Chemical mapping of a 177-nucleotide RNA with 2A3 and DMS.
2A3 adducts were read by reverse transcription with SuperScript II with manganese.
High DMS reactivity at an A or C suggests that its Watson-Crick edge is free.
The RNA was probed in 150 mM KOAc, 10 mM MgCl2 and 150 mM bicine (pH 8.5) at 24 C.
RNA sequence: GGGAACGACUCGAGUAGAGUCGAAAAUUUGGUCAAUCGAGCCUUUAAUCGACUCUGCAGUUUCCCCCUACCAAAGGUAAGGAACUCAGAGAAAGGCCAGCUCCUUUAAGCAUCUUACAGCUAAAGGGACUGAAAAUGACUUCGGUCAUUUUCAGUCAAAAGAAACAACAACAACAAC
Reactivity to 2A3 in 0.01 (KOAc 150mM, MgCl2 10mM, bicine 150mM(pH8.5), 24C), signal-to-noise 5, nucleotides 027 to 126: u120u030u020g000g020u000c020a090a160u030c080g010a080g140c070c040u210u220u250a150a180u040c010g000a010c000u000c000u000g000c020a020g010u000u000u030c010c000c000c000c010u130a210c020c120a300a260a010g040g000u060a030a030g040g000a000a000c000u030c020a020g000a020g010a060a020a010g010g010c000c000a020g000c010u030c000c000u000u050u050a120a040g020c000a050u060c030u100u220a090c070a030g020c010u010a030a030a000g030g000
Reactivity to DMS in 0.01 (KOAc 150mM, MgCl2 10mM, bicine 150mM(pH8.5), 24C), signal-to-noise 2, nucleotides 027 to 126: u000u040u000g000g000u000c040a120a230u020c000g000a070g050c130c130u050u040u030a100a200u000c020g000a130c000u000c000u000g000c210a030g000u000u010u010c000c030c080c000c010u000a110c240c220a160a090a040g010g040u030a230a100g000g000a000a020c000u000c000a050g010a000g020a030a060a010g000g010c000c020a020g000c120u040c000c000u000u010u000a070a040g000c000a110u020c180u030u080a060c210a110g020c010u000a020a050a010g000g010